[RMDB]
RNA sequence: GGGAACGACUCGAGUAGAGUCGAAAAUGCAAAAUGGAGAAACAUUGAAUUUUGCAGUAGUUAAACCUAUUACUGGUGACCUAUUACAUCAAGGAUUUGUCUCUAAAUAUAUUGAUGUAUAUGAAUCGGCACAACUCUUAUUCGUAAGAGUUGUGCCAAAAGAAACAACAACAACAAC
Reactivity to 2A3 in 0.01 (KOAc 150mM, MgCl2 10mM, bicine 150mM(pH8.5), 24C), signal-to-noise 4, nucleotides 027 to 126: u020g050c000a020a000a000a000u100g080g110a170g170a130a250a010c100a150u100u260g100a210a040u000u040u020u020g000c000a000g030u090a010g000u030u240a080a100a050c000c000u080a130u160u300a200c170u140g010g000u040g080a020c000c000u050a050u110u000a010c000a000u000c010a020a040g050g000a060u010u080u150g120u070c070u000c030u300a040a030a010u080a040u110a080u000u020g010a000u010g010u010a040u000a000u160g140a120a080u110c040
Reactivity to DMS in 0.01 (KOAc 150mM, MgCl2 10mM, bicine 150mM(pH8.5), 24C), signal-to-noise 2, nucleotides 027 to 126: u020g010c000a020a010a030a050u000g020g020a200g030a120a140a070c290a090u080u040g030a230a010u000u000u000u000g000c000a040g000u030a040g010u030u000a080a020a000c000c010u000a150u010u040a070c300u000g000g000u000g000a200c080c030u000a060u050u010a000c000a000u020c040a000a010g000g010a110u000u000u000g020u030c070u010c100u000a010a000a020u020a090u040a050u040u000g000a020u000g000u050a070u040a070u000g000a070a140u050c030

Chemical mapping of a 177-nucleotide RNA with 2A3 and DMS. The reactions ran in a buffer of 150 mM KOAc, 10 mM MgCl2 and 150 mM bicine (pH 8.5), at 24 C. For DMS the reverse transcriptase was MarathonRT.